[RMDB]
RNA sequence: GGGAACGACUCGAGUAGAGUCGAAAAGGCAGUUAUGAGACGUGAAGAUGAGUAUCUUGUAAAGAGGGAUAGGAGAAUUGGAGGGCAAGUUUGGUGCCAGCAGCCGCGGUAAUACCGACUCCAAGAGCAUGUAUUUGACGUUCGCGUCAAAUACAUGAAAAGAAACAACAACAACAAC
Reactivity to DMS in 0.01 (KOAc 150mM, MgCl2 10mM, bicine 150mM(pH8.5), 24C), signal-to-noise 3, nucleotides 027 to 126: g000g030c030a080g030u000u010a080u010g000a100g000a080c050g050u000g040a050a060g010a050u010g020a190g010u010a110u000c050u000u000g000u010a030a100a110g010a060g010g010g000a080u010a060g020g000a100g020a080a100u000u000g020g000a070g010g000g000c070a030a080g010u010u010u000g020g020u010g000c020c030a050g000c050a090g010c040c050g030c050g030g000u000a060a050u000a300c070c020g010a070c040u000c010c020a040a110g000a100g020
Reactivity to 2A3 in 0.01 (KOAc 150mM, MgCl2 10mM, bicine 150mM(pH8.5), 24C), signal-to-noise 2, nucleotides 027 to 126: g000g010c030a000g020u040u110a080u180g050a050g000a050c030g020u020g020a030a030g070a050u080g000a000g090u080a040u030c070u040u080g080u170a060a060a030g080a050g070g010g000a050u080a060g090g110a060g060a140a110u100u050g020g040a060g020g000g000c020a020a020g000u010u090u110g030g050u030g030c020c000a000g050c000a010g030c030c050g060c030g000g030u030a070a040u030a130c020c020g030a060c000u000c040c020a050a010g000a000g100
Conditions: 150 mM KOAc, 10 mM MgCl2 and 150 mM bicine (pH 8.5), 24 C. This 177-nucleotide RNA was probed chemically with DMS and 2A3. For DMS the reverse transcriptase was MarathonRT. For DMS, 1,848 sequencing reads were counted. Values cover nucleotides 27 to 126. For 2A3, 1,166 sequencing reads were counted.